The record gives the reactivity of an RNA of 207 nucleotides to 2A3. 2A3 is a SHAPE reagent: it acylates the 2'-hydroxyl of flexible nucleotides of all four kinds.
RNA sequence: GGGAACGACUCGAGUAGAGUCGAAAACAAUGAAAAGAUUAUAGACGCAUUUAUAGAGUUAGGAGCCGAUCUAACUAUUCCAAAUAACGAUGGACUGAUACCAGUAAUUUACUGUAUACACGUAAAUGCUGAAUAUGGUUAUAACAAUAUUACUAACCGUUACAGCACAGUUCGCUGUGCUGUAACGAAAAGAAACAACAACAACAAC
Reactivity to 2A3 in 0.01 (KOAc 150mM, MgCl2 10mM, bicine 150mM(pH8.5), 24C), signal-to-noise 2, nucleotides 027 to 156: c020a000a070u180g040a070a050a040a090g060a010u160u180a020u130a160g080a000c040g000c050a000u000u060u040a040u100a020g070a000g000u040u050a070g030g040a030g030c210c130g010a070u040c050u040a030a010c000u060a080u090u040c020c010a110a000a140u210a060a020c090g050a030u060g050g030a060c000u040g080a050u050a110c020c020a000g020u000a100a240u050u180u020a000c000u000g040u170a070u050a090c060a000c010g020u000a030a030a000u010g000c010u030g040a020a020u060a050u090g000g000u040u060a080u000a100a000c010a080a070u090a040u300u130a010c090u060a040a000c030